RNA sequence: GGGAACGACUCGAGUAGAGUCGAAAAUGGGACUUCAAACCUCUCACCAGAAGAGUGUGUAAAAUAUCUAUGCAUUAGAUUAAGAGAAACCAAUAGGAAUUGUGAACUAUGUUCUGUGGAGAAAGCUAAGCCAAUUAUAGAAGGUCAGCAAUGUGACGAUUCGCUACUGUUUCGACAGUAGCGAAUCAAAAGAAACAACAACAACAAC
Reactivity to 2A3 in 0.01 (KOAc 150mM, MgCl2 10mM, bicine 150mM(pH8.5), 24C), signal-to-noise 1, nucleotides 027 to 156: u030g000g000g020a000c010u020u050c150a130a070a150c000c020u030c010u060c050a210c140c020a010g080a300a020g070a070g000u060g000u000g080u110a000a000a000a070u050a110u100c090u000a110u060g000c000a000u050u000a040g050a090u130u110a230a020g070a020g040a130a000a000c050c070a030a090u070a120g110g000a090a040u060u120g060u090g090a050a060c040u100a120u300g010u040u040c070u170g070u110g110g000a040g000a000a000a000g010c000u000a000a000g020c000c010a000a070u280u050a070u020a090g130a130a040g100g160u050c000a000g000c000a000a160u110g010u040g070a050c130